Structure probing data (2A3 and DMS) for a 207-nucleotide construct. Values cover nucleotides 27 to 156. The DMS profile rests on 3,525 reads. Conditions: 150 mM KOAc, 10 mM MgCl2 and 150 mM bicine (pH 8.5), 24 C. 2A3 adducts were read by reverse transcription with SuperScript II with manganese. It was measured as part of the RMDB library M2RFPK.
[RMDB]
RNA sequence: GGGAACGACUCGAGUAGAGUCGAAAAGGGAAUGGUGGUUUACCCCGUUAUCAAAUGAUUACCGACCAAUAAUUGGCGAGACUCGUUUCGCGUUGGCUGCCUAAUUCAAGGAAUUAGCGUGCCUUCAAAGACAUCAAGAAGUUCGCUUCUUGAUGAACCAUUGUCAACUGUUCGCAGUUGACAAUGGAAAAGAAACAACAACAACAAC
Reactivity to 2A3 in 0.01 (KOAc 150mM, MgCl2 10mM, bicine 150mM(pH8.5), 24C), signal-to-noise 4, nucleotides 027 to 156: g050g010g010a070a080u150g020g070u080g020g010u030u090u180a120c010c020c000c010g090u030u110a120u120c060a040a140a180u170g030a050u090u100a040c030c010g050a040c020c030a040a010u220a120a080u150u180g040g000c010g010a010g020a050c060u040c120g020u020u030u010c090g030c010g030u010u040g010g000c030u050g020c030c000u000a010a010u020u000c100a160a080g170g020a080a040u010u020a010g020c030g070u030g030c010c000u020u000c030a050a030a030g070a040c000a000u000c000a000a010g000a000a000g010u020u100c190g000c110u000u000c000u000u010g000a000u000g000a010a000
Reactivity to DMS in 0.01 (KOAc 150mM, MgCl2 10mM, bicine 150mM(pH8.5), 24C), signal-to-noise 2, nucleotides 027 to 156: g010g020g020a050a050u000g010g020u000g000g000u000u000u010a080c000c000c000c000g020u000u000a140u000c040a050a050a070u000g010a130u000u000a070c000c010g000a070c010c030a040a160u010a050a150u010u000g000g010c030g010a080g000a060c040u000c060g010u000u000u000c020g030c090g050u000u000g020g000c040u000g040c150c010u000a050a050u000u000c020a150a120g010g000a050a020u000u000a030g020c040g000u010g010c000c000u000u000c060a100a080a090g000a120c000a020u000c000a030a000g000a030a010g030u000u010c300g020c000u000u010c000u000u000g020a000u000g000a050a110